[RMDB]
RNA sequence: GGGAACGACUCGAGUAGAGUCGAAAAGCCACUUAUCCCGUGACAUUGCGAAAGCAAGGCUGGCGGUAGGUAGUCCUGGGCGGCGACAGCCUUGGACUGCGGCGUAAAGGUGUACCUGGGGCCGUUAUAACGCGGUAACAGUUCGCUGUUACCGCAACAAACACACUGAGUUCGCUCAGUGUGUUUGAAAAGAAACAACAACAACAAC
Reactivity to DMS in 0.01 (KOAc 150mM, MgCl2 10mM, bicine 150mM(pH8.5), 24C), signal-to-noise 2, nucleotides 027 to 156: g020c040c020a070c040u000u000a090u010c000c030c010g020u000g000a070c050a150u010u000g020c010g000a140a160a300g040c030a030a020g000g060c020u020g050g010c030g050g000u010a060g060g010u000a020g000u000c010c020u020g000g020g010c030g030g050c030g020a090c120a210g000c000c000u020u000g010g000a030c020u000g010c020g000g010c030g010u010a090a090a050g010g020u000g010u000a090c040c050u000g000g000g030g090c010c040g020u000u000a100u000a090a110c090g000c000g000g000u000a010a020c000a040g000u000u010c240g000c010u000g000u000u010a030c000c000g020c000a000a050
Reactivity to 2A3 in 0.01 (KOAc 150mM, MgCl2 10mM, bicine 150mM(pH8.5), 24C), signal-to-noise 3, nucleotides 027 to 156: g060c050c000a030c030u060u100a040u060c020c000c000g040u060g060a080c100a230u020u080g020c020g040a110a030a020g020c010a010a030g070g020c070u050g040g000c030g010g030u030a030g000g070u020a000g000u000c000c010u030g010g000g000c030g010g040c090g080a040c070a030g000c000c020u000u000g010g000a010c010u010g000c010g000g000c010g020u100a060a060a040g030g000u090g050u190a170c040c040u050g010g000g020g030c010c000g010u020u100a110u020a140a080c120g000c010g040g000u000a000a000c000a010g040u080u070c160g030c120u010g010u000u000a000c000c000g000c000a000a000
Structure probing data (DMS and 2A3) for a 207-nucleotide construct. DMS adducts were read by reverse transcription with MarathonRT. The reactions ran in a buffer of 150 mM KOAc, 10 mM MgCl2 and 150 mM bicine (pH 8.5), at 24 C. Reactivities are given for positions 27 through 156. It was measured as part of the RMDB library M2RFPK. 2A3 adducts were read by reverse transcription with SuperScript II with manganese.